[RMDB]
RNA sequence: GGGAACGACUCGAGUAGAGUCGAAAAGAUAUGGAUCCCCUACGAACUACAUCCUCCGGGAGAUUACUGUCGGAAACGACAGAUAAUCGAAGAACGGAGGAGUGUAGUUCGUAGGGGAUCCUAAGUCCUUGUACUUUACGUUCGCGUAAAGUACAAGAAAAGAAACAACAACAACAAC
Reactivity to DMS in 0.01 (KOAc 150mM, MgCl2 10mM, bicine 150mM(pH8.5), 24C), signal-to-noise 1, nucleotides 027 to 126: g000a160u010a300u010g000g020a010u000c000c000c000c000u000a000c000g010a040a020c000u000a000c000a110u000c000c000u010c000c010g010g000g000a110g020a000u000u000a020c000u010g000u010c000g000g000a120a100a260c010g000a000c010a010g000a120u000a010a010u000c000g000a130a120g000a150a250c000g000g000a010g010g010a000g020u000g020u000a000g020u000u000c010g010u000a000g010g020g000g000a000u000c000c000u000a010a080g000u000c040
Annotation: Chemical mapping of a 177-nucleotide RNA with DMS. It was measured as part of the RMDB library TTRINS. For DMS, 1,897 sequencing reads were counted. The reactions ran in a buffer of 150 mM KOAc, 10 mM MgCl2 and 150 mM bicine (pH 8.5), at 24 C. Reactivities are rounded to 0.1 and cut off at 0 and 3.